Structure probing data (2A3 and DMS) for a 177-nucleotide construct. The DMS profile rests on 7,007 reads. 2A3 adducts were read by reverse transcription with SuperScript II with manganese. For 2A3, 2,824 sequencing reads were counted. Conditions: 150 mM KOAc, 10 mM MgCl2 and 150 mM bicine (pH 8.5), 24 C.
RNA sequence: GGGAACGACUCGAGUAGAGUCGAAAAUAUGUGAGGAAUUGUGAAACUGAGAAUCCGAUUGAUGCAGCUGCAUCAAAUUUGGCGAUGCAAGAAGCUAAAAGCUCUGGCGCUCCUUGUAUAGUAGUGCCACUUCCAUUGGGUUCGCCCAAUGGAAGUGAAAAGAAACAACAACAACAAC
Reactivity to 2A3 in 0.01 (KOAc 150mM, MgCl2 10mM, bicine 150mM(pH8.5), 24C), signal-to-noise 5, nucleotides 027 to 126: u210a080u140g050u050g010a050g010g080a080a040u190u080g060u040g100a120a080a070c050u050g010a030g060a150a080u010c010c000g020a060u000u060g030a040u020g010c010a080g050c090u300g000c070a010u010c020a030a060a050u090u040u120g030g000c040g020a000u040g010c070a070a050g040a080a000g060c020u070a060a020a040a070g010c000u010c020u050g040g020c010g000c000u030c010c000u020u030g070u120a090u090a110g120u030a010g030u000g070c030
Reactivity to DMS in 0.01 (KOAc 150mM, MgCl2 10mM, bicine 150mM(pH8.5), 24C), signal-to-noise 4, nucleotides 027 to 126: u020a030u010g010u020g020a030g010g000a120a100u000u020g010u000g000a080a120a080c100u030g010a100g010a120a070u030c030c040g000a090u000u010g000a030u010g000c000a230g000c180u030g000c000a020u000c000a030a020a090u020u010u030g020g000c080g020a080u010g000c020a010a060g020a050a060g020c010u000a060a060a070a170g000c050u010c040u010g000g010c060g030c020u010c000c010u000u000g010u010a040u010a030g010u030a020g000u020g040c060